[RMDB]
RNA sequence: GGGAACGACUCGAGUAGAGUCGAAAAGUUGUGCGGAGGAAGCGGUCGAAAUCUUCGAUCCCGUCGCUGAGUCCGUCUCCUCUUAUUUCGGGUUGUUCAGUCGCGGUGAAACCGCUCCCGAGAAACCGAAAACAGGUGUAUUCGUACACCUGUUUUCAAAAGAAACAACAACAACAAC
Reactivity to 2A3 in 0.01 (KOAc 150mM, MgCl2 10mM, bicine 150mM(pH8.5), 24C), signal-to-noise 4, nucleotides 027 to 126: g110u110u080g070u100g060c010g000g000a010g010g010a040a010g000c000g010g050u140c010g050a040a080a170u120c110u250u070c110g050a030u060c060c040c010g070u040c010g000c000u020g000a020g080u020c000c000g020u010c010u010c000c000u000c020u110u130a130u040u190u020c010g020g000g000u010u030g000u000u040c020a030g090u110c050g020c010g070g030u190g190a250a050a070c010c000g000c000u010c000c010c000g090a110g120a140a090a030c110c090
Reactivity to DMS in 0.01 (KOAc 150mM, MgCl2 10mM, bicine 150mM(pH8.5), 24C), signal-to-noise 6, nucleotides 027 to 126: g020u000u000g030u010g020c030g000g010a050g000g000a280a060g010c010g020g010u010c010g000a040a100a060u010c080u010u010c180g010a020u010c060c080c050g010u010c040g000c010u010g000a300g000u000c020c010g020u000c050u000c080c020u000c050u000u010a040u000u000u010c000g010g000g000u000u000g010u000u000c030a110g000u000c120g010c010g010g010u010g000a050a050a300c000c020g000c010u000c020c010c020g020a150g010a060a080a090c250c110